This 177-nucleotide RNA was probed chemically with DMS and 2A3. Source: RMDB libraries RFM100 and RFMREP, as collected in RNAgym.
RNA sequence: GGGAACGACUCGAGUAGAGUCGAAAACAGCCAAUCGUUCACCUCCUCAUAACAAGUCUAACUGGCUCGGGGAAGCUGAAAGGGCUGCACUAAAAUAACAUAGAUGAGAUAUUUCGCAUGAUAAUCUCAUGCGGGAUACAUUCGUGUAUCCCGCAUGAAAAGAAACAACAACAACAAC
Reactivity to DMS in 0.01 (KOAc 150mM, MgCl2 10mM, bicine 150mM(pH8.5), 24C), signal-to-noise 2, nucleotides 027 to 126: c010a070g070c030c040a130a040u060c090g030u000u040c040a130c110c040u000c010c020u000c010a210u020a080a150c270a120a090g000u000c010u050a140a180c210u060g000g000c000u000c170g000g000g010g000a000a010g030c130u000g000a000a020a050g000g000g050c010u010g000c060a180c100u040a000a150a020a140u070a110a050c080a030u000a080g000a030u010g050a150g040a070u000a020u030u000u040c040g000c020a030u020g020a070u010a080a060u000c100u010
Reactivity to 2A3 in 0.01 (KOAc 150mM, MgCl2 10mM, bicine 150mM(pH8.5), 24C), signal-to-noise 3, nucleotides 027 to 126: c000a000g010c000c010a040a150u120c090g070u020u010c000a020c030c020u030c010c000u020c000a090u070a180a020c070a080a000g020u000c030u060a040a060c080u160g000g030c040u010c060g000g000g000g000a040a030g000c060u050g010a010a000a050g010g000g000c030u020g010c010a020c070u150a050a050a030a140u160a070a030c070a070u200a090g070a090u080g040a070g030a090u110a140u080u100u040c030g000c060a040u060g030a060u100a070a130u070c010u000

High DMS reactivity at an A or C suggests that its Watson-Crick edge is free. The reactions ran in a buffer of 150 mM KOAc, 10 mM MgCl2 and 150 mM bicine (pH 8.5), at 24 C.